[RMDB]
RNA sequence: GGGAACGACUCGAGUAGAGUCGAAAAGCAAACUUCGUCUCACGCCUUAGCACCGGUCGUUUUGGUUUGUUCAAGACUCAGGCUGCAUUGAAACGAUUUGCGGAGCACUGUGUUUGGAGCCCAACUGCCUCUGAGGCAGCUCGGGCGGCAUUGCGCCGCACGGUUCGCUGUUCGCAGCGAACCGUGCAAAAGAAACAACAACAACAAC
Reactivity to 2A3 in 0.01 (KOAc 150mM, MgCl2 10mM, bicine 150mM(pH8.5), 24C), signal-to-noise 1, nucleotides 027 to 156: g020c020a000a090a000c120u060u050c060g000u000c000u060c000a000c010g060c010c000u030u050a050g040c030a010c000c020g050g220u240c110g070u020u010u160u150g100g030u110u020u150g130u110u100c090a030a010g030a110c000u010c000a010g090g000c000u070g020c100a130u000u180g030a060a030a040c030g020a040u040u000u020g010c010g070g000a020g050c010a030c150u010g010u000g020u120u090u110g140g010a020g000c000c000c000a030a020c030u000g020c000c000u120c160u300g160a300g000g000c000a000g000c000u050c050g000g000g000c000g000g030c010a000u000u180g020c030g000c000c010
This 207-nucleotide RNA was probed chemically with 2A3. The 2A3 profile rests on 621 reads. Reactivities are given for positions 27 through 156. The RNA was probed in 150 mM KOAc, 10 mM MgCl2 and 150 mM bicine (pH 8.5) at 24 C. It was measured as part of the RMDB library OK3TST.